[RMDB]
RNA sequence: GGGAACGACUCGAGUAGAGUCGAAAAGGCUUGGGGCCGAGAGACUCAAACGGGUACGUCCGGGGUAGGAGUGAAAUCCUGUAAUCCUGGACGGACCACCAAUGGGGAAACCACGUUGAGAGACCGGGUAUCAAAUUGGCUUCGGCCAAUUUGAUACAAAAGAAACAACAACAACAAC
Reactivity to 2A3 in 0.01 (KOAc 150mM, MgCl2 10mM, bicine 150mM(pH8.5), 24C), signal-to-noise 2, nucleotides 027 to 126: g000g020c010u070u110g050g000g090g020c010c020g010a050g000a000g000a050c000u010c030a030a000a030c070g000g020g020u040a020c000g010u000c000c000g000g000g020g010u040a020g010g000a010g000u090g080a070a050a060u000c000c000u000g070u110a040a070u010c000c000u010g020g000a000c000g020g020a020c010c000a100c020c090a090a130u170g000g010g000g020a060a100a000c050c020a040c040g020u000u050g030a050g000a000g010a020c000c030g050g000
Reactivity to DMS in 0.01 (KOAc 150mM, MgCl2 10mM, bicine 150mM(pH8.5), 24C), signal-to-noise 1, nucleotides 027 to 126: g000g000c040u000u050g050g000g000g000c000c000g000a300g020a170g030a100c010u000c010a000a000a020c160g020g000g040u000a010c020g000u000c000c000g050g010g000g030u000a000g000g000a010g010u000g000a140a050a190u000c010c000u020g000u000a110a160u040c000c000u000g000g000a040c000g050g000a010c000c010a090c100c200a030a220u020g000g000g000g000a160a120a110c080c020a140c080g010u000u020g000a060g000a070g000a170c060c060g000g020
The record gives the reactivity of an RNA of 177 nucleotides to 2A3 and DMS. The DMS profile rests on 1,652 reads. Conditions: 150 mM KOAc, 10 mM MgCl2 and 150 mM bicine (pH 8.5), 24 C. Source: RMDB library RFM100, as collected in RNAgym. The 2A3 profile rests on 1,685 reads. For DMS the reverse transcriptase was MarathonRT.